[RMDB]
RNA sequence: GGGAACGACUCGAGUAGAGUCGAAAACACCGGUUGACACCGGUGUUAUGGCGUGAACCGCGUUCACGUCGGCUUCCAAUUUCUGGCGGGCUACAGGCCUCGGCCCUCUUGUAGUGACCUGCGCCUAAUACCCGAGGAAGUUCGCUUCCUCGGGUAUAAAAGAAACAACAACAACAAC
Reactivity to 2A3 in 0.01 (KOAc 150mM, MgCl2 10mM, bicine 150mM(pH8.5), 24C), signal-to-noise 3, nucleotides 027 to 126: c000a000c000c030g000g030u090u230g030a030c040a010c140c000g050g000u010g000u010u000a020u040g000g000c000g000u000g000a010a000c050c170g120c250g040u000u030c000a010c010g000u000c000g000g010c030u030u050c000c010a090a090u110u100u060c050u050g010g050c020g010g000g000c000u020a020c040a040g040g020c030c020u060c150g040g020c010c010c020u060c020u030u100g050u070a070g010u020g120a090c050c040u050g020c020g010c000c000u000a090
Reactivity to DMS in 0.01 (KOAc 150mM, MgCl2 10mM, bicine 150mM(pH8.5), 24C), signal-to-noise 2, nucleotides 027 to 126: c000a010c010c040g010g020u030u000g030a110c300a160c030c000g000g020u010g000u000u000a010u020g010g010c040g000u000g000a090a010c040c290g000c300g000u000u000c010a020c000g000u010c010g050g020c090u060u000c000c090a090a090u000u010u010c110u010g000g020c010g020g000g000c000u000a100c080a040g010g020c000c030u040c180g040g000c020c020c100u010c020u040u020g000u030a040g000u000g000a100c020c070u110g000c300g000c020c000u000a080